[RMDB]
Conditions: 150 mM KOAc, 10 mM MgCl2 and 150 mM bicine (pH 8.5), 24 C. Chemical mapping of a 177-nucleotide RNA with 2A3 and DMS. DMS adducts were read by reverse transcription with MarathonRT. 2A3 adducts were read by reverse transcription with SuperScript II with manganese. The 2A3 profile rests on 1,081 reads. It was measured as part of the RMDB library RFMREP.
RNA sequence: GGGAACGACUCGAGUAGAGUCGAAAAACAAACGCCAACGAUGAGCGUUUCGCUGUAGCCGCUUAAGGCAACAGCCGGGGCCGCCUGAGCCCUGUUACCAAAGACGGCUGGCGGGGGCUUCGGCCCCCUCUCCGAUAAGGUUCGCCUUAUCGGAGAGAAAAGAAACAACAACAACAAC
Reactivity to 2A3 in 0.01 (KOAc 150mM, MgCl2 10mM, bicine 150mM(pH8.5), 24C), signal-to-noise 1, nucleotides 027 to 126: a000c020a010a010a000c010g010c000c000a110a080c180g300a250u210g050a030g110c020g020u000u040u040c050g010c000u000g020u010a050g020c020c020g060c210u190u270a190a100g000g020c010a020a000c000a000g000c000c000g000g000g000g000c000c080g000c040c000u020g000a020g010c000c000c040u000g040u010u130a040c010c000a050a040a000g000a020c030g000g010c030u000g100g080c120g080g010g000g000g000c010u060u060c250g030g000c000c000c000c000
Reactivity to DMS in 0.01 (KOAc 150mM, MgCl2 10mM, bicine 150mM(pH8.5), 24C), signal-to-noise 2, nucleotides 027 to 126: a090c180a010a000a020c010g020c000c030a140a150c260g050a210u010g050a190g000c000g010u000u000u000c090g000c000u010g000u000a040g040c000c000g020c260u000u010a050a100g020g000c010a050a020c000a010g010c010c050g000g000g020g000c010c080g010c060c030u000g000a050g010c000c000c010u000g000u020u000a230c020c020a040a020a030g000a230c300g000g000c010u020g010g000c180g040g000g040g010g000c000u000u000c100g000g020c000c000c000c000